[RMDB]
RNA sequence: GGGAACGACUCGAGUAGAGUCGAAAAAUACACCAGCACUAGGACUCAGCGACCGUCACAACAAGGUUGUGCUGGUAUCCGACGGUCGUAUAGCCCUGUCUUGCAGGUUGCCUUGCACUGACGUGCCACACCAUUUACAGAUUCGUCUGUAAAUGAACUAUACUACCGACUUCGGUCGGUAGUAUAGAAAAGAAACAACAACAACAAC
Reactivity to DMS in 0.01 (KOAc 150mM, MgCl2 10mM, bicine 150mM(pH8.5), 24C), signal-to-noise 2, nucleotides 027 to 156: a130u000a110c040a100c010c010a040g050c010a060c040u010a070g030g000a050c030u000c110a120g010c010g000a010c000c010g010u010c010a200c040a130a090c100a180a120g010g010u000u010g000u000g030c000u000g000g000u000a020u010c090c020g010a040c000g000g010u010c020g020u000a090u000a010g000c020c000c000u010g010u030c050u010u010g100c030a110g030g020u020u010g040c050c120u000u000g030c000a020c040u010g030a170c170g020u000g000c000c060a090c060a180c110c000a010u000u000u000a010c000a030g000a070u000u020c300g020u010c000u000g040u010a010a010a010u000g000a040a130
Reactivity to 2A3 in 0.01 (KOAc 150mM, MgCl2 10mM, bicine 150mM(pH8.5), 24C), signal-to-noise 3, nucleotides 027 to 156: a000u110a010c050a010c030c000a000g010c010a000c040u120a080g000g120a060c040u060c170a030g010c000g000a000c000c000g010u020c000a040c030a180a140c030a180a140g080g020u080u020g010u050g020c000u020g000g000u010a050u000c020c010g000a000c000g000g000u000c020g000u060a040u070a010g010c020c000c010u040g030u010c040u020u110g010c030a030g030g010u140u160g030c010c020u040u050g010c010a060c070u090g050a050c080g030u050g050c020c020a080c020a030c030c010a000u000u000u000a000c000a000g010a000u030u100c150g120u010c090u000g010u010a000a000a010u000g000a000a000
Conditions: 150 mM KOAc, 10 mM MgCl2 and 150 mM bicine (pH 8.5), 24 C. Chemical mapping of a 207-nucleotide RNA with DMS and 2A3. High 2A3 reactivity points to a flexible backbone, as in loops and unpaired stretches. The DMS profile rests on 3,226 reads. In probing experiments dimethyl sulfate is read out at A N1 and C N3, which are open when not base-paired. DMS adducts were read by reverse transcription with MarathonRT.